The record gives the reactivity of an RNA of 207 nucleotides to 2A3.
The reactions ran in a buffer of 150 mM KOAc, 10 mM MgCl2 and 150 mM bicine (pH 8.5), at 24 C.
It was measured as part of the RMDB library OK3TST.
[RMDB]
RNA sequence: GGGAACGACUCGAGUAGAGUCGAAAAGAGGCAUUGCUGCACGUCGCCGCUGAAGAUGGCAAAGGGCGAGGCGGCCAACACGGAAAUUAACCAGACCGACAGUCCCACCACCUGAUUGUAGCUGGCGUGGACGGGCAGCGGCUGGCGGCACACGAUCCCGUAUCGAAGGAUUCGUCCUUCGAUACGGAAAAGAAACAACAACAACAAC
Reactivity to 2A3 in 0.01 (KOAc 150mM, MgCl2 10mM, bicine 150mM(pH8.5), 24C), signal-to-noise 2, nucleotides 027 to 156: g110a020g000g020c080a080u090u240g000c050u010g040c060a080c090g080u060c010g020c010c000g000c020u010g060a110a020g020a100u160g010g010c060a050a080a170g040g000g000c130g060a100g020g000c010g010g000c000c010a070a050c040a020c030g000g090a100a030a160u120u130a100a100c110c020a020g090a070c000c030g030a050c020a060g060u150c110c020c000a030c000c040a070c000c020u100g060a130u150u180g090u220a030g000c070u070g050g000c050g000u060g010g050a050c020g010g010g000c020a000g000c030g010g000c000u060g040g010c000g010g000c020a030c000a000c050g000a050u050c000

The 2A3 profile rests on 991 reads.